[RMDB]
RNA sequence: GGGAACGACUCGAGUAGAGUCGAAAAGCAUGGUGUUCAGCUCGAUGCGAUACUCCGUCAGGUUGUCCAUGUACAGUGCGGCGCCGAGGCCGGCGACCGCCAGCAGCACCAGAUAUAUCGCGCACACACGAUGUAAAUCCUUCGGGAUUUACAUCGUAAAAGAAACAACAACAACAAC
Reactivity to DMS in 0.01 (KOAc 150mM, MgCl2 10mM, bicine 150mM(pH8.5), 24C), signal-to-noise 4, nucleotides 027 to 126: g000c080a060u000g010g010u010g010u000u010c090a150g010c020u010c080g000a090u010g020c050g000a080u010a070c180u010c050c070g030u000c080a090g000g000u000u000g000u010c050c070a090u000g020u010a090c150a090g020u010g020c020g000g000c010g000c020c010g040a220g030g010c150c040g020g010c010g000a100c020c040g020c000c040a060g000c040a060g000c020a040c010c010a050g010a080u010a090u000a070u000c010g010c060g020c100a090c140a070c130
Reactivity to 2A3 in 0.01 (KOAc 150mM, MgCl2 10mM, bicine 150mM(pH8.5), 24C), signal-to-noise 3, nucleotides 027 to 126: g030c030a060u080g000g050u070g070u180u120c080a030g020c030u020c090g120a070u080g020c040g010a010u040a050c070u070c070c040g080u060c090a050g000g000u050u030g020u070c020c020a040u050g050u080a080c080a060g060u080g210c000g030g020c020g010c010c020g030a200g130g270c200c000g000g000c030g070a280c000c000g000c000c010a010g000c000a000g000c010a010c010c000a000g030a020u110a010u010a010u080c060g020c000g040c070a010c000a010c000
The record gives the reactivity of an RNA of 177 nucleotides to DMS and 2A3. For DMS, 3,435 sequencing reads were counted. 2A3 adducts were read by reverse transcription with SuperScript II with manganese. Conditions: 150 mM KOAc, 10 mM MgCl2 and 150 mM bicine (pH 8.5), 24 C. It was measured as part of the RMDB library OK2TRN. In probing experiments dimethyl sulfate is read out at A N1 and C N3, which are open when not base-paired.